Source: RMDB libraries RFM100 and RFMREP, as collected in RNAgym. An RNA of 177 nucleotides, treated with DMS and 2A3 and read out base by base. The reactions ran in a buffer of 150 mM KOAc, 10 mM MgCl2 and 150 mM bicine (pH 8.5), at 24 C. DMS adducts were read by reverse transcription with MarathonRT. For 2A3 the reverse transcriptase was SuperScript II with manganese.
RNA sequence: GGGAACGACUCGAGUAGAGUCGAAAAUGCUUUUGAAUUCUUGCACUAGCUUCCAUUGAUAGAUAAUGGUUACAUUUUGGUGCUGCAACUCUUGUGGUAGCUAGUACAAGAGUUCAAAAGUAGUGAAGGACACACUAGAAUUCGUUCUAGUGUGUCCAAAAGAAACAACAACAACAAC
Reactivity to DMS in 0.01 (KOAc 150mM, MgCl2 10mM, bicine 150mM(pH8.5), 24C), signal-to-noise 2, nucleotides 027 to 126: u000g010c000u000u010u010u010g000a040a000u000u000c040u000u000g000c050a040c000u000a000g020c000u000u000c000c000a020u050u030g040a050u010a000g010a020u010a140a200u020g010g000u010u030a050c000a190u020u030u050u050g070g030u000g000c010u000g030c100a050a120c240u010c000u000u000g000u000g010g000u010a020g020c020u000a000g040u000a090c000a010a030g050a000g020u030u000c000a000a030a010a030g040u030a000g000u020g010a150a080
Reactivity to 2A3 in 0.01 (KOAc 150mM, MgCl2 10mM, bicine 150mM(pH8.5), 24C), signal-to-noise 9, nucleotides 027 to 126: u060g010c000u010u010u010u010g010a010a010u000u000c000u000u020g000c020a000c000u000a000g010c000u030u040c000c000a010u010u230g130a070u130a110g030a030u120a110a100u210g070g030u170u300a050c040a120u260u270u140u300g180g010u040g000c030u030g010c040a060a070c050u010c000u040u050g000u000g010g010u000a000g000c000u000a000g000u000a000c000a000a000g000a000g000u000u000c000a000a000a000a000g000u000a010g010u020g150a100a060